[RMDB]
RNA sequence: GGGAACGACUCGAGUAGAGUCGAAAAGAAUCUCACUUGGGCGGGUGCUUUAGUGACUCCAGCUGGGGAUUUAUGGCGUAUUAGUGAGAUUAUGAAUACGUUGAAAUGAUUACGCGCAAAGUAACAAGGGAUUACAUUUGUUCGCAAAUGUAAUCCCAAAAGAAACAACAACAACAAC
Reactivity to DMS in 0.01 (KOAc 150mM, MgCl2 10mM, bicine 150mM(pH8.5), 24C), signal-to-noise 1, nucleotides 027 to 126: g050a060a000u000c010u000c000a000c000u050u050g040g010g000c130g070g000g000u000g000c060u020u010u040a040g000u000g000a110c070u030c000c000a080g050c020u030g030g020g000g000a040u000u000u000a010u000g000g040c090g000u040a050u000u000a080g090u020g000a010g000a040u000u000a110u000g020a070a040u000a010c050g010u020u000g000a030a050a050u010g000a110u000u000a010c000g000c100g000c180a040a020a210g000u010a020a060c090a060a200
Reactivity to 2A3 in 0.01 (KOAc 150mM, MgCl2 10mM, bicine 150mM(pH8.5), 24C), signal-to-noise 1, nucleotides 027 to 126: g050a000a000u000c000u000c000a030c020u090u130g000g010g010c070g060g090g000u010g060c000u030u110u150a020g020u120g100a050c040u000c010c000a020g010c070u110g000g000g000g050a010u000u050u200a090u100g030g040c080g000u050a050u120u050a040g050u010g060a100g030a030u090u100a040u230g200a080a060u040a070c000g000u020u050g050a040a070a110u230g010a160u000u040a020c000g000c010g000c080a040a090a040g060u030a020a050c140a030a010